[RMDB]
RNA sequence: GGGAACGACUCGAGUAGAGUCGAAAACGAACUCCGGGUGGCUGCACUGUUUGCCAAGUGCAAGCGCAUGUUGGAGAUGAUCGAAUCCGGGAUGGACCUGCACGGCGAAACCGCCAAGGAGCUGUUCUCCUAAAAGGACGUUCGCGUCCUUUUAGGAAAAAGAAACAACAACAACAAC
Reactivity to 2A3 in 0.01 (KOAc 150mM, MgCl2 10mM, bicine 150mM(pH8.5), 24C), signal-to-noise 3, nucleotides 027 to 126: c000g000a060a020c010u000c000c020g080g000g040u010g010g040c030u040g010c010a010c030u050g110u250u260u270g100c030c010a130a020g020u020g000c040a080a090g000c070g080c040a020u120g130u160u100g050g000a020g020a060u180g100a090u090c040g020a080a060u020c010c000g000g010g010a040u050g000g020a030c000c000u030g040c070a040c110g030g020c010g010a200a090a060c060c030g000c000c020a050a070g030g010a060g020c020u040g050u050u000c010
Reactivity to DMS in 0.01 (KOAc 150mM, MgCl2 10mM, bicine 150mM(pH8.5), 24C), signal-to-noise 4, nucleotides 027 to 126: c060g000a060a120c010u010c010c000g020g040g050u010g000g010c040u000g000c050a020c040u000g010u000u000u020g020c160c160a100a040g020u000g020c000a020a060g000c020g020c000a020u000g020u000u020g010g000a030g010a120u010g000a070u000c070g010a150a120u000c030c010g000g000g010a050u010g000g000a090c030c000u000g020c080a100c130g000g010c010g000a060a080a130c130c030g000c040c030a100a100g010g000a080g020c050u000g000u010u000c050
Chemical mapping of a 177-nucleotide RNA with 2A3 and DMS.
For DMS, 4,366 sequencing reads were counted.
High 2A3 reactivity points to a flexible backbone, as in loops and unpaired stretches.
DMS adducts were read by reverse transcription with MarathonRT.
Source: RMDB library OK2TST, as collected in RNAgym.